[RMDB]
RNA sequence: GGGAACGACUCGAGUAGAGUCGAAAAUGCCGGUUACCCGCUACGGGACGAAAAGACCCCGUGAACCUUUACUAUAGCUUCGCAUUGGUAUUGGAUAAUUAAUGUGUAGGAUAGGUCGGAGACAUUGCUAAUAUUGUACCUUCGGGUACAAUAUUAGAAAAGAAACAACAACAACAAC
Reactivity to 2A3 in 0.01 (KOAc 150mM, MgCl2 10mM, bicine 150mM(pH8.5), 24C), signal-to-noise 9, nucleotides 027 to 126: u070g010c000c000g010g010u060u100a130c010c000c010g010c030u030a020c020g020g000g030a030c040g090a060a090a070a030g130a100c020c010c000c000g000u010g020a030a050c010c000u060u130u110a050c030u040a020u060a110g080c010u050u070c060g000c030a060u020u040g020g000u060a050u060u130g090g020a050u070a150a020u170u070a070a070u070g040u010g040u090a040g020g040a050u040a050g020g030u040c020g000g020a050g010a030c040a060u110u180g000
Reactivity to DMS in 0.01 (KOAc 150mM, MgCl2 10mM, bicine 150mM(pH8.5), 24C), signal-to-noise 9, nucleotides 027 to 126: u020g010c020c020g010g000u010u010a100c020c010c020g010c150u010a040c040g010g000g010a120c050g000a090a080a140a160g000a170c090c010c000c010g020u000g010a090a110c060c020u010u010u010a080c040u000a040u010a140g000c030u010u000c090g010c030a100u010u000g000g010u000a040u010u010g010g010a140u020a060a060u010u010a040a040u010g000u000g000u010a030g010g010a040u010a030g010g010u000c060g010g000a120g010a090c110a070u010u010g010

Description: Chemical mapping of a 177-nucleotide RNA with 2A3 and DMS. For 2A3 the reverse transcriptase was SuperScript II with manganese. For DMS the reverse transcriptase was MarathonRT.